[RMDB]
RNA sequence: GGGAACGACUCGAGUAGAGUCGAAAAUGACGAAGCAGCACUGCUCAGUCUGCAUGAAUCCUAACGAAGAGGGAAUUGAGUGCUAGCAUGAAGGUAGGCCAAGCAGUAUCAUGAUAGCGUCUGUAGAGUCGUUCGAGCAUUUCGAUGCUCGAGCGACAAAAGAAACAACAACAACAAC
Reactivity to DMS in 0.01 (KOAc 150mM, MgCl2 10mM, bicine 150mM(pH8.5), 24C), signal-to-noise 6, nucleotides 027 to 126: u030g000a020c060g010a170a080g000c050a050g040c170a090c050u000g000c020u000c080a240g010u010c010u000g020c080a080u020g030a150a120u010c090c010u000a080a150c150g020a110a090g010a100g020g000g040a060a060u040u000g010a150g020u010g020c010u000a060g010c070a050u000g010a100a070g000g010u010a050g020g000c030c030a110a080g010c020a030g010u020a080u010c090a070u010g000a070u040a080g000c060g000u000c000u000g000u010a040g010a260
Reactivity to 2A3 in 0.01 (KOAc 150mM, MgCl2 10mM, bicine 150mM(pH8.5), 24C), signal-to-noise 8, nucleotides 027 to 126: u160g020a020c030g100a140a030g030c040a000g030c040a030c120u050g000c000u010c040a030g060u000c010u010g000c010a010u040g060a070a050u030c010c030u070a130a040c090g120a070a070g040a080g070g060g020a070a130u100u130g040a070g040u070g010c030u050a040g020c030a060u110g050a090a010g090g040u050a030g080g000c020c000a040a010g020c010a000g030u070a060u140c060a070u060g040a060u050a030g040c030g030u030c050u060g110u090a040g010a020
This 177-nucleotide RNA was probed chemically with DMS and 2A3.
The reactions ran in a buffer of 150 mM KOAc, 10 mM MgCl2 and 150 mM bicine (pH 8.5), at 24 C.
For 2A3, 9,110 sequencing reads were counted.
The DMS profile rests on 10,150 reads.